[RMDB]
RNA sequence: GGGAACGACUCGAGUAGAGUCGAAAAGAAGGUGUGUUCGCACACCUUCAAAUAGGUCAGACAAAAGCUUCCUGGAGUCAAGACGUGAAAACCAAAGGAGCAAAACCACCUACUUCGGUAGGUGGAAGAAUCAAUAUUACUUCGGUAAUAUUGAUUCAAAAGAAACAACAACAACAAC
Reactivity to 2A3 in 0.01 (KOAc 150mM, MgCl2 10mM, bicine 150mM(pH8.5), 24C), signal-to-noise 7, nucleotides 027 to 126: g000a000a000g010g000u010g000u000g000u030u100c130g070c050a000c000a000c000c000u000u000c000a000a000a000u060a010g040g000u040c030a010g000a110c030a030a140a030a020g000c010u150u090c020c010u030g030g030a030g030u040c050a090a090g040a040c070g110u150g060a070a050a020a030c020c010a030a040a060g020g000a030g000c000a000a010a020a080c000c000a000c000c000u000a000c000u020u050c220g080g000u000a000g010g000u000g000g000a000a010
Reactivity to DMS in 0.01 (KOAc 150mM, MgCl2 10mM, bicine 150mM(pH8.5), 24C), signal-to-noise 6, nucleotides 027 to 126: g010a010a000g010g010u000g020u000g030u000u020c240g030c010a010c000a000c000c000u000u000c010a010a060a080u000a090g010g010u010c020a100g000a060c060a080a080a120a120g000c040u000u010c020c010u000g010g020a230g010u000c040a050a080g000a060c040g020u000g000a040a040a080a140c050c020a030a080a080g000g000a040g020c060a090a070a080a160c010c010a000c010c000u000a000c000u000u010c140g030g010u000a010g000g010u000g000g000a010a010

Structure probing data (2A3 and DMS) for a 177-nucleotide construct. The DMS profile rests on 8,370 reads. Reactivities are given for positions 27 through 126.